[RMDB]
RNA sequence: GGGAACGACUCGAGUAGAGUCGAAAAACAUAGGCCAUGCUUACGAGCAUGGCCUAUGACGAAUCUCAAGCAAUCAAGCAUUCUACUUCUAUCGCAACACUGAGGAGCUUACGAGCUCCUCAGUGAAAAAAGAGAGUAAUGUUCGCAUUACUCUCAACAAAUAAAUGCAGUUCGCUGCAUUUAUUUGAAAAGAAACAACAACAACAAC
Reactivity to DMS in 0.01 (KOAc 150mM, MgCl2 10mM, bicine 150mM(pH8.5), 24C), signal-to-noise 2, nucleotides 027 to 156: a120c030a010u000a010g000g010c000c000a020u000g030c000u000u000a120c260g010a120g000c000a010u010g030g020c020c000u000a000u000g010a110c080g000a100a090u000c030u010c040a090a140g000c090a100a110u010c130a090a130g010c060a100u010u000c060u010a050c060u000u010c020u010a080u000c030g000c030a090a240c000a030c000u000g000a010g020g000a020g000c020u000u000a140c270g010a070g040c010u000c000c000u000c010a010g000u000g000a000a020a040a080a070a080g000a030g000a010g020u000a050a000u000g010u000u010c290g070c010a010u000u000a010c000u000c010u010c020a010a060
Reactivity to 2A3 in 0.01 (KOAc 150mM, MgCl2 10mM, bicine 150mM(pH8.5), 24C), signal-to-noise 2, nucleotides 027 to 156: a010c010a000u000a000g000g020c010c000a000u000g000c000u150u100a100c240g080a020g000c000a020u000g010g050c010c000u000a000u000g020a000c000g040a050a040u050c010u020c050a070a020g050c030a080a190u230c010a130a060g070c000a110u110u070c020u100a150c070u130u160c040u110a180u170c140g050c080a030a130c000a040c000u000g000a010g000g000a000g000c000u100u040a100c220g050a010g000c010u040c000c000u000c000a000g000u010g020a000a000a000a000a000a010g000a010g000a000g010u000a010a000u020g010u080u110c180g000c100a000u000u000a000c000u000c000u000c050a000a000
Structure probing data (DMS and 2A3) for a 207-nucleotide construct. DMS (dimethyl sulfate) methylates the pairing face of unpaired adenines and cytosines. The data come from the RNA Mapping Database (RMDB), library M2RFPK. For DMS the reverse transcriptase was MarathonRT. As a SHAPE reagent, 2A3 marks flexible, mostly unpaired nucleotides at the ribose 2'-OH. The RNA was probed in 150 mM KOAc, 10 mM MgCl2 and 150 mM bicine (pH 8.5) at 24 C.